[RMDB]
RNA sequence: GGGAACGACUCGAGUAGAGUCGAAAACACAAAACAUUGUGAGGACCAUUUUCAGAAGAUCGAAACUUGCUAGCAUGUUAUCACUGUAAGAAACGACAUCAUUAAUUUUCCUCUGUGGUAAAACUAGACCGAGCCUUGAGUGUACGAAUCCAUAUUAAUUAGUCACUGCAUUCGUGCAGUGACUAAUAAAAGAAACAACAACAACAAC
Reactivity to DMS in 0.01 (KOAc 150mM, MgCl2 10mM, bicine 150mM(pH8.5), 24C), signal-to-noise 1, nucleotides 027 to 156: c060a140c050a110a140a060a080c080a090u000u010g010u000g000a160g010g000a150c030c040a250u000u000u000u000c040a240g040a090a200g010a070u000c060g010a090a180a050c020u000u000g030c000u000a070g020c030a120u000g020u000u010a110u000c010a050c010u000g030u040a030a050g060a100a070a120c050g020a050c130a140u000c070a080u000u040a050a090u010u010u000u000c000c000u000c060u000g060u090g000g000u000a010a010a040a050c080u000a050g020a070c060c030g000a120g000c050c010u010u000g000a080g040u010g010u000a080c040g000a110a080u000c030c030a080u000a090u000u000a110
Reactivity to 2A3 in 0.01 (KOAc 150mM, MgCl2 10mM, bicine 150mM(pH8.5), 24C), signal-to-noise 3, nucleotides 027 to 156: c050a010c020a000a010a090a030c040a090u160u130g050u050g050a050g020g000a010c020c030a040u040u000u060u090c070a060g040a130a050g020a160u120c040g050a100a030a110c040u040u090g020c050u070a030g010c000a120u120g030u120u110a010u080c000a030c020u020g050u100a020a040g010a050a040a010c070g040a030c030a040u080c010a010u050u140a120a120u060u070u020u010c010c000u070c050u040g000u030g020g000u020a050a030a000a110c020u020a020g020a050c010c020g030a000g010c000c000u040u040g030a040g010u030g000u020a020c040g030a020a020u000c010c030a050u050a070u180u070a070